[RMDB]
RNA sequence: GGGAACGACUCGAGUAGAGUCGAAAAUGUACCAGGCCAGGUACAACUGUUCAUCAUCUAACUCAGAUCAUGGGGUUAUUCAGAUUAUGGGGUCAUCCCGUAGUCGAUGCGAAGAAAGGAGUGGAGAGCCUGAUCAUACGUUCGCGUAUGAUCAGGCAAAAGAAACAACAACAACAAC
Reactivity to 2A3 in 0.01 (KOAc 150mM, MgCl2 10mM, bicine 150mM(pH8.5), 24C), signal-to-noise 1, nucleotides 027 to 126: u030g010u000a000c010c010a050g070g190c010c000a020g020g000u020a020c000a090a060c070u060g010u160u090c010a100u000c000a060u000c060u000a050a070c040u000c070a040g090a190u030c040a110u130g030g000g000g010u140u040a070u160u070c040a010g020a040u020u020a010u080g000g000g000g090u170c070a120u270c040c010c000g020u000a010g020u010c020g030a040u100g000c010g070a000a070g050a020a090a000g050g020a050g000u120g040g060a160g000a000
Reactivity to DMS in 0.01 (KOAc 150mM, MgCl2 10mM, bicine 150mM(pH8.5), 24C), signal-to-noise 2, nucleotides 027 to 126: u010g010u000a030c020c000a090g030g050c110c120a110g000g020u000a050c070a070a080c090u010g000u010u000c040a070u020c090a110u000c080u010a080a070c050u000c040a040g000a090u010c130a080u010g000g040g000g010u000u000a040u000u010c090a170g020a040u000u010a000u010g010g010g010g000u010c240a170u010c000c000c000g000u000a000g010u000c020g000a070u010g000c130g010a110a040g000a020a080a090g010g000a020g020u000g000g010a120g010a090

The record gives the reactivity of an RNA of 177 nucleotides to 2A3 and DMS.
As a SHAPE reagent, 2A3 marks flexible, mostly unpaired nucleotides at the ribose 2'-OH.
DMS (dimethyl sulfate) methylates the pairing face of unpaired adenines and cytosines.
Reactivities are given for positions 27 through 126.
The RNA was probed in 150 mM KOAc, 10 mM MgCl2 and 150 mM bicine (pH 8.5) at 24 C.